Conditions: 150 mM KOAc, 10 mM MgCl2 and 150 mM bicine (pH 8.5), 24 C. Structure probing data (2A3 and DMS) for a 177-nucleotide construct. 2A3 adducts were read by reverse transcription with SuperScript II with manganese. For 2A3, 827 sequencing reads were counted. DMS adducts were read by reverse transcription with MarathonRT. The data come from the RNA Mapping Database (RMDB), library OK2TST.

RNA sequence: GGGAACGACUCGAGUAGAGUCGAAAAUUAAUGGUGCCGGAUUAGCUAUGAGCACAUUAGACAUUCUUAAGAUUCAUGGAGGAUCUGCAGCAAAUUUCCUUGAUGUAGGCGGGAGCGCUACGGAACACAGUGACUGUCUGUUCGCAGACAGUCACUGAAAAGAAACAACAACAACAAC
Reactivity to 2A3 in 0.01 (KOAc 150mM, MgCl2 10mM, bicine 150mM(pH8.5), 24C), signal-to-noise 1, nucleotides 027 to 126: u090u050a020a090u100g110g030u040g000c020c050g060g000a050u020u050a030g000c100u030a050u120g060a010g000c020a010c020a120u000u100a040g030a010c050a120u060u130c040u080u080a160a040g010a100u060u050c010a010u090g090g020a050g010g000a030u010c020u040g000c000a020g070c000a000a040a060u020u060u000c080c000u100u060g100a120u090g030u050a030g040g030c010g110g090g000a030g050c150g000c060u040a000c010g040g010a190a000c160a000
Reactivity to DMS in 0.01 (KOAc 150mM, MgCl2 10mM, bicine 150mM(pH8.5), 24C), signal-to-noise 1, nucleotides 027 to 126: u000u000a070a110u000g020g030u010g000c020c060g020g020a100u020u010a080g040c000u010a070u000g000a090g000c120a040c190a100u000u040a040g010a150c180a070u010u000c020u000u010a060a130g010a120u040u010c020a060u000g000g010a170g010g010a030u000c030u000g010c060a080g010c030a040a040a050u000u000u010c010c040u000u000g010a190u000g010u000a080g000g030c060g040g000g000a100g000c010g020c010u000a030c020g020g010a100a120c200a060